[RMDB]
RNA sequence: GGGAACGACUCGAGUAGAGUCGAAAAACUUCCACCCCUAAGAUUCUGAAUUAAAGGCAUCACUCCACGAAUCUGAGGUGGUACGGAUUUCAGGUGGAGUAUUCGUAUACGGAAUGGAGACUGUAGAGAUCACCAUAUAUUUCGAUAUAUGGUGAUCAAAAGAAACAACAACAACAAC
Reactivity to DMS in 0.01 (KOAc 150mM, MgCl2 10mM, bicine 150mM(pH8.5), 24C), signal-to-noise 7, nucleotides 027 to 126: a080c200u000u010c010c000a140c030c000c020c000u010a100a080g000a060u000u020c030u010g020a100a080u030u040a050a100a090g000g000c160a070u010c090a070c070u000c010c020a040c070g000a020a020u010c000u010g000a060g020g000u010g000g010u020a060c060g020g000a020u000u010u020c140a070g000g020u010g000g000a050g020u000a020u020u000c040g020u020a070u020a080c080g000g010a040a030u000g010g000a080g000a090c110u010g010u010a070g010a290
Reactivity to 2A3 in 0.01 (KOAc 150mM, MgCl2 10mM, bicine 150mM(pH8.5), 24C), signal-to-noise 9, nucleotides 027 to 126: a000c030u100u010c010c000a040c010c010c000c010u050a070a060g020a130u090u020c060u090g110a130a120u160u110a220a070a040g080g010c040a060u080c050a050c020u000c010c010a020c030g030a020a030u010c000u010g010a040g040g090u100g010g020u050a050c020g030g010a030u060u080u130c060a070g130g040u010g000g020a010g010u020a050u020u080c040g010u100a040u030a120c060g020g060a030a040u080g080g020a050g040a050c060u070g040u110a030g040a020
The record gives the reactivity of an RNA of 177 nucleotides to DMS and 2A3. It was measured as part of the RMDB library OK1LIB. For 2A3, 21,403 sequencing reads were counted. The reactions ran in a buffer of 150 mM KOAc, 10 mM MgCl2 and 150 mM bicine (pH 8.5), at 24 C. Reactivities are given for positions 27 through 126.